[RMDB]
RNA sequence: GGGAACGACUCGAGUAGAGUCGAAAAGGGGUCGAGCUUGUCAGUGAGGAGGCUUGGAUUUAUGGCUGAAGCCUCCACGGCCAUUGUCAGCCUUGUAGCUUGGAUUUAGCUCGACGGAGGCACCCAAAAGCCGCGAUCGUUUCGACGAUCGCGGCAACAUUUUAGGAUGGUUCGCCAUCCUAAAAUGAAAAGAAACAACAACAACAAC
Reactivity to 2A3 in 0.01 (KOAc 150mM, MgCl2 10mM, bicine 150mM(pH8.5), 24C), signal-to-noise 1, nucleotides 027 to 156: g130g020g010g020u030c040g000a020g000c000u050u030g000u020c030a050g000u060g100a140g170g000a010g030g030c050u100u110g140g000a090u190u300u160a040u090g000g000c030u000g030a000a040g010c000c000u030c020c000a000c000g010g010c040c000a010u000u040g000u090c030a000g000c030c000u030u090g050u020a090g050c060u080u130g210g020a050u120u160u170a000g010c000u010c000g000a000c020g000g000a010g000g000c020a010c020c000c040a080a170a000a000g000c000c010g040c010g020a000u000c020g000u000u160u160c220g100a050c050g020a000u000c040g000c010g000g000c000a000a020